[RMDB]
RNA sequence: GGGAACGACUCGAGUAGAGUCGAAAAAGCUCGAUCACCUAUACGUAGGUGAUCGAGCACUGGCUAAACAUUCAAACAUGUUUGUCAAACAUUUCGUUUGACGCAAAUGUUUGUAUGUUUAGCCAAAAGAAUAGACGAACUUCGGUUCGUCUAUUCUAAAAGAAACAACAACAACAAC
Reactivity to 2A3 in 0.01 (KOAc 150mM, MgCl2 10mM, bicine 150mM(pH8.5), 24C), signal-to-noise 5, nucleotides 027 to 126: a000g000c000u000c000g000a010u000c000a010c010c000u030a030u040a080c300g090u020a020g000g010u000g000a010u000c000g000a000g000c000a000c010u010g000g000c000u010a000a000a000c000a000u030u030c000a000a000a000c000a000u020g050u180u160u170g000u070c000a030a000a000c040a080u110u300u300c160g000u010u000u000g000a020c010g010c030a080a140a070u030g000u000u000u010g000u000a000u000g000u000u000u000a000g010c000c000a000a000a000
Reactivity to DMS in 0.01 (KOAc 150mM, MgCl2 10mM, bicine 150mM(pH8.5), 24C), signal-to-noise 2, nucleotides 027 to 126: a040g000c000u000c000g010a040u010c010a000c010c000u000a050u030a100c150g070u010a000g010g000u000g000a010u000c000g010a000g020c000a010c100u010g000g000c000u030a010a010a010c000a010u000u000c000a000a000a010c000a030u000g010u010u050u020g020u000c000a000a000a010c010a170u020u030u040c220g010u000u000u000g000a000c000g020c200a090a170a020u000g000u000u000u000g000u000a010u000g020u000u000u000a000g000c010c020a010a000a090